[RMDB]
RNA sequence: GGGAACGACUCGAGUAGAGUCGAAAAGCAAUAAAACGGAGGAUGAGAGCAUUUAGAGAUGACCUAGGGCAAAAAAUGAAGAAGAGAGGCCUCCCUUUAAAAAUAGAAGAGACCUGGAUAUCUCCGAAAACUAGUGUAAGUUCGCUUACACUAGUUUAAAAGAAACAACAACAACAAC
Reactivity to DMS in 0.01 (KOAc 150mM, MgCl2 10mM, bicine 150mM(pH8.5), 24C), signal-to-noise 2, nucleotides 027 to 126: g010c080a100a080u000a080a070a090a180c090g010g010a070g010g020a070u000g010a140g000a110g040c070a040u000u000u010a130g020a180g000a080u000g000a070c080c060u000a060g020g020g000c030a010a040a050a070a140a090u000g000a090a030g000a080a040g010a300g000a110g010g000c070c040u000c030c040c010u000u000u000a010a110a100a090a060u000a090g000a150a140g010a040g010a020c050c030u010g000g000a070u010a070u000c000u000c010c010g000a120